[RMDB]
RNA sequence: GGGAACGACUCGAGUAGAGUCGAAAACCAUAACAGUUCGCUGUUAUGGACUGUCGGAAUGCGGAAUAAUUAAUCGUCCGCUUACGAAUAAUACCGACUAUAAAGCGUAACACUUCGGUGUUACGAACUCUUCCCGGUAGUUCGCUACCGGGAAGAGAAAAGAAACAACAACAACAAC
Reactivity to DMS in 0.01 (KOAc 150mM, MgCl2 10mM, bicine 150mM(pH8.5), 24C), signal-to-noise 2, nucleotides 027 to 126: c030c000a030u020a020a010c020a000g010u000u000c180g040c000u020g000u000u000a010u000g010g010a100c100u000g020u020c010g010g010a140a070u000g020c000g000g010a030a010u000a110a180u020u010a150a060u000c160g020u000c010c000g060c010u000u010a070c110g000a050a120u000a070a110u010a070c020c020g000a030c070u000a050u020a090a070a100g000c000g020u000a000a020c000a030c000u000u010c190g030g020u000g000u010u010a000c010g000a020a070
Reactivity to 2A3 in 0.01 (KOAc 150mM, MgCl2 10mM, bicine 150mM(pH8.5), 24C), signal-to-noise 2, nucleotides 027 to 126: c000c000a000u000a000a000c010a000g040u050u100c100g040c090u000g000u000u000a000u010g000g050a050c090u050g020u010c000g000g000a150a060u110g000c040g040g090a000a060u170a080a150u230u180a110a120u150c130g030u020c000c000g010c000u000u020a040c000g040a050a010u170a100a020u040a090c000c020g030a000c020u040a030u100a250a060a030g110c010g000u000a000a010c000a000c010u030u070c210g150g010u020g000u000u000a000c010g000a010a010
Source: RMDB library M2PK50, as collected in RNAgym. Structure probing data (DMS and 2A3) for a 177-nucleotide construct.